[RMDB]
This 207-nucleotide RNA was probed chemically with DMS and 2A3. For DMS, 8,018 sequencing reads were counted. Reactivities are rounded to 0.1 and cut off at 0 and 3.
RNA sequence: GGGAACGACUCGAGUAGAGUCGAAAAAUAGAAAACUACAGGUGUGAUAAUUGCCUUGGCUAAUUGUCUUUCUCUUUUACUGAGUGAUUCUAGUUCACCUUCUAUAGAUCUGAGAAUGGAUGAUUCUCCAGUCGAAACAUAUUCUACCAUGGCUCCGUCAUGGACAUCAAUUCGUUGAUGUCCAUGAAAAAGAAACAACAACAACAAC
Reactivity to DMS in 0.01 (KOAc 150mM, MgCl2 10mM, bicine 150mM(pH8.5), 24C), signal-to-noise 3, nucleotides 027 to 156: a140u010a140g000a120a050a080a080c050u010a050c040a100g000g020u000g000u010g010a080u000a060a080u010u000g020c000c020u010u000g010g000c010u000a060a050u000u010g020u000c020u000u000u000c020u000c000u000u000u010u000a080c020u010g020a080g040u000g000a080u000u000c100u010a160g010u000u000c020a040c020c030u000u000c050u010a150u000a120g010a070u000c050u010g010a070g010a040a050u000g020g010a070u010g010a180u000u000c060u000c030c030a090g020u000c030g010a120a050a040c030a080u000a080u000u000c020u010a050c020c020a110u000g020g010c020u000c060c030g010
Reactivity to 2A3 in 0.01 (KOAc 150mM, MgCl2 10mM, bicine 150mM(pH8.5), 24C), signal-to-noise 6, nucleotides 027 to 156: a010u120a020g070a010a090a030a020c060u140a050c050a070g050g000u040g020u040g070a070u070a200a060u100u090g010c020c000u050u060g020g000c030u030a030a040u060u060g010u020c000u010u050u000c000u000c000u010u080u030u030a100c060u050g020a020g070u030g020a040u130u040c080u130a040g100u030u020c010a040c030c000u020u040c030u060a130u080a140g050a080u030c030u030g020a010g020a070a030u090g020g040a020u030g020a020u050u010c010u000c030c010a020g030u040c030g060a040a060a020c050a020u100a060u090u050c020u020a040c010c020a060u050g040g000c060u070c110c020g040